Chemical mapping of a 177-nucleotide RNA with DMS and 2A3. For DMS the reverse transcriptase was MarathonRT. For 2A3, 7,156 sequencing reads were counted. 2A3 adducts were read by reverse transcription with SuperScript II with manganese. For DMS, 6,181 sequencing reads were counted. The RNA was probed in 150 mM KOAc, 10 mM MgCl2 and 150 mM bicine (pH 8.5) at 24 C.
[RMDB]
RNA sequence: GGGAACGACUCGAGUAGAGUCGAAAAAGCCAUCGGCUGUGCGGGAUGGCGGGCCAUCGACGCGGCCGAGAUUGCGCGCGGCAGCGCCGACGGCCGGGUCCGCAACAAGUUCACCGACGUCGCCGAGCGCAGCAUAGAAUUUCGAUUCUAUGCUGCGAAAAGAAACAACAACAACAAC
Reactivity to DMS in 0.01 (KOAc 150mM, MgCl2 10mM, bicine 150mM(pH8.5), 24C), signal-to-noise 5, nucleotides 027 to 126: a110g010c030c030a150u000c010g000g010c010u000g030u010g010c010g010g000g010a050u000g000g000c020g020g010g020c000c000a090u000c080g000a060c140g020c020g000g020c000c000g010a070g000a120u000u010g000c140g010c040g010c040g010g020c180a120g020c000g030c020c020g000a070c040g000g020c010c010g000g000g010u000c010c010g020c030a090a110c160a090a110g000u000u000c080a200c060c020g000a060c040g020u010c200g000c020c010g000a050g010
Reactivity to 2A3 in 0.01 (KOAc 150mM, MgCl2 10mM, bicine 150mM(pH8.5), 24C), signal-to-noise 5, nucleotides 027 to 126: a000g070c000c010a050u030c010g010g000c010u080g120u270g120c010g010g010g010a040u060g060g150c000g000g010g020c020c000a100u150c140g130a080c060g000c000g060g000c000c030g000a010g010a020u110u240g030c110g000c010g000c010g210g040c090a110g020c020g000c000c000g020a070c010g000g000c000c010g050g010g000u000c000c000g020c010a040a130c050a080a050g080u080u070c090a120c200c020g040a070c020g040u160c030g000c000c010g000a010g030